[RMDB]
RNA sequence: GGGAACGACUCGAGUAGAGUCGAAAACACUGGCCUGAUGAACAAGAAGCAGAUACUAGGCUUAUUCGAUGGGUAAAAGGUCUCAAAUACUCAAAGCCCUAAUACACGUACGGAGUCGAAUAAGUAUUCUACAGCUAGAGUUCGCUCUAGCUGUAGAAAAAGAAACAACAACAACAAC
Reactivity to 2A3 in 0.01 (KOAc 150mM, MgCl2 10mM, bicine 150mM(pH8.5), 24C), signal-to-noise 4, nucleotides 027 to 126: c060a000c030u030g000g010c020c010u120g070a140u060g010a050a080c060a080a110g100a090a010g050c030a040g010a060u130a220c040u120a090g210g000c000u000u020a010u000u000c010g010a050u080g050g000g040u070a040a060a070a090g030g030u050c020u030c060a100a140a090u170a060c030u030c070a110a070a000g020c010c010c010u040a100a010u090a030c150a040c130g040u190a040c070g090g030a010g010u010c000g000a000a010u010a010a000g010u020a050u010
Reactivity to DMS in 0.01 (KOAc 150mM, MgCl2 10mM, bicine 150mM(pH8.5), 24C), signal-to-noise 2, nucleotides 027 to 126: c110a100c060u020g040g000c070c000u000g000a070u020g000a050a100c190a050a100g000a090a100g000c080a070g000a060u010a060c040u000a080g020g010c010u000u000a000u000u020c000g010a010u000g000g040g000u000a010a120a280a080g040g000u020c060u000c120a020a100a050u010a030c170u030c130a080a150a120g000c050c000c000u010a000a070u000a060c100a120c080g020u050a070c050g010g050a170g020u000c020g010a020a030u000a000a050g020u010a070u010